Source: RMDB library RFMREP, as collected in RNAgym. Structure probing data (DMS and 2A3) for a 177-nucleotide construct. The reactions ran in a buffer of 150 mM KOAc, 10 mM MgCl2 and 150 mM bicine (pH 8.5), at 24 C. DMS adducts were read by reverse transcription with MarathonRT.
RNA sequence: GGGAACGACUCGAGUAGAGUCGAAAAGAUGCGGUCUUCGCAAGGACCGCAACAUGAAGGUACGAUGCUUUUGUGUCGUGCUUCUUGUUUCUGGCACGUUGUGUCUUCACGCAGACAGAAGCUACCCCCAAUUGCAUGACUUCGGUCAUGCAAUUGGAAAAGAAACAACAACAACAAC
Reactivity to DMS in 0.01 (KOAc 150mM, MgCl2 10mM, bicine 150mM(pH8.5), 24C), signal-to-noise 1, nucleotides 027 to 126: g000a210u010g010c010g010g010u010c000u010u010c240g000c200a110a110g010g000a000c000c000g000c000a000a000c060a060u040g010a090a010g010g000u010a000c020g000a010u000g020c010u010u040u000u050g040u000g040u000c010g000u000g000c000u000u010c020u010u000g000u000u000u000c040u010g010g040c040a100c120g000u000u010g060u010g010u020c210u000u020c020a130c100g010c060a060g020a060c010a020g000a060a010g000c040u000a290c020c030c050
Reactivity to 2A3 in 0.01 (KOAc 150mM, MgCl2 10mM, bicine 150mM(pH8.5), 24C), signal-to-noise 1, nucleotides 027 to 126: g060a010u060g010c000g000g020u000c010u090u100c240g060c160a100a070g020g020a020c000c000g040c000a020a000c020a010u080g140a090a010g090g030u070a010c010g030a030u080g050c050u170u230u300u230g090u020g040u020c000g000u010g010c030u020u030c010u000u040g030u010u030u030c050u020g000g000c100a020c160g180u230u300g040u020g050u000c040u160u190c090a060c010g010c010a030g000a000c000a010g020a050a000g110c010u070a100c000c000c000